The record gives the reactivity of an RNA of 207 nucleotides to DMS and 2A3. For 2A3 the reverse transcriptase was SuperScript II with manganese.
RNA sequence: GGGAACGACUCGAGUAGAGUCGAAAAACAUUGAGAUGCUGGGCGCUAUGGUCGUCCUCCUCCGGCUGACCUCCUUCUCAGCUGCUGACCGGCGCCGCACAGGCGGCAUCUCAGCUUCGUGUGCAAAAAAAGAAUGGUCGGUUCGCCGACCAUUCAACUUUGGAUAAUUCUUCGGAAUUAUCCAAAGAAAAGAAACAACAACAACAAC
Reactivity to DMS in 0.01 (KOAc 150mM, MgCl2 10mM, bicine 150mM(pH8.5), 24C), signal-to-noise 2, nucleotides 027 to 156: a070c160a150u000u010g000a030g000a020u000g010c000u000g000g020g010c020g010c030u040a040u010g060g020u000c020g020u000c070c010u000c030c010u000c060c020g000g020c010u000g020a040c070c100u000c140c080u000u010c110u020c020a040g020c000u000g000c010u020g000a050c030c030g020g000c000g040c020c010g000c070a090c100a120g030g020c040g000g030c010a030u000c010u000c010a040g000c060u000u000c080g010u000g010u000g010c010a000a000a060a110a110a080a210g000a020a000u000g000g000u000c000g050g020u000u000c300g030c020c000g020a040c000c000a000u010u000c000a030a080
Reactivity to 2A3 in 0.01 (KOAc 150mM, MgCl2 10mM, bicine 150mM(pH8.5), 24C), signal-to-noise 3, nucleotides 027 to 156: a000c030a060u080u060g000a000g000a000u000g000c000u050g050g020g000c030g000c030u050a120u300g030g010u020c020g090u080c000c040u020c000c000u040c020c010g010g010c000u010g000a030c010c050u160c050c040u300u090c050u010c040a000g020c010u020g030c050u110g000a000c000c000g000g000c010g000c010c000g010c010a030c010a020g190g020c000g000g010c000a000u010c010u020c010a010g020c010u160u150c130g110u070g010u050g100c090a130a140a000a000a000a020a020g000a000a000u000g000g000u000c000g000g050u030u030c230g040c060c000g000a000c000c000a000u000u000c000a000a000
Values cover nucleotides 27 to 156. The DMS profile rests on 7,210 reads.